An RNA of 207 nucleotides, treated with 2A3 and read out base by base. It was measured as part of the RMDB library ARCHII.

RNA sequence: GGGAACGACUCGAGUAGAGUCGAAAAAUGGUACGUAAGCACGCGGAGGCUUCUUUGGUUCCCUCCAUAAUCUGAGUCAAGGAAAAUUUAAUUGGCAACAAUGAGUAUGCUCUCGCUGCCUAAUCGAAGUAUAGUAGAUUACUGGCUUUAUUCCUUUCUUUAUUUAAUACUUCGGUAUUAAAUAAAGAAAAGAAACAACAACAACAAC
Reactivity to 2A3 in 0.01 (KOAc 150mM, MgCl2 10mM, bicine 150mM(pH8.5), 24C), signal-to-noise 2, nucleotides 027 to 156: a000u090g010g020u090a020c000g010u030a060a080g020c010a030c080g070c050g090g010a010g030g000c010u100u020c030u140u170u120g040g000u110u070c010c000c000u000c010c000a040u060a080a050u010c030u070g030a010g040u010c020a020a070g120g010a100a070a020a070u130u170u230a040a080u040u030g020g000c010a020a010c000a020a140u080g000a010g040u080a080u150g020c030u010c010u020c040g030c070u080g050c010c010u010a030a000u020c030g010a010a020g040u130a060u130a270g000u020a000g010a020u030u060a030c120u040g000g020c000u040u120u060a110u130u090c000c000u020u000u000